An RNA of 177 nucleotides, treated with 2A3 and DMS and read out base by base. For DMS, 2,207 sequencing reads were counted.

RNA sequence: GGGAACGACUCGAGUAGAGUCGAAAACAACUAUAUAUACCCGGCACUCGGACCAGAUGGAUCUAUUCUUCCAACAGACUCCAAUGGAAAAUCUAUAUAUCCGGUCCGUGGUCCCGAUGGUACACCACAUGUGACGUAAAUUCGUUUACGUCACAUGAAAAGAAACAACAACAACAAC
Reactivity to 2A3 in 0.01 (KOAc 150mM, MgCl2 10mM, bicine 150mM(pH8.5), 24C), signal-to-noise 3, nucleotides 027 to 126: c000a030a050c070u100a090u080a080u010a010u040a300c000c030c000g040g010c010a000c020u010c000g000g020a000c000c010a030g010a050u040g040g000a000u010c010u030a050u030u040c050u070u000c010c010a070a050c050a170g160a180c100u080c150c060a030a100u010g000g000a010a010a010a020u010c040u000a020u000a030u010a010u110c010c020g000g000u000c000c010g010u040g000g020u020c040c030c020g050a070u150g000g010u040a050c010a040c050c050a050
Reactivity to DMS in 0.01 (KOAc 150mM, MgCl2 10mM, bicine 150mM(pH8.5), 24C), signal-to-noise 3, nucleotides 027 to 126: c040a140a130c170u000a080u020a140u010a300u000a030c020c030c020g020g020c260a030c000u000c020g010g010a020c010c010a030g000a030u000g000g000a040u000c070u020a060u010u000c160u000u000c000c000a050a130c130a080g000a150c110u000c090c090a090a160u010g000g000a040a020a070a020u000c080u000a010u000a070u000a030u010c010c030g020g000u000c000c000g010u020g020g000u000c300c010c010g020a080u000g010g000u000a030c140a120c120c130a170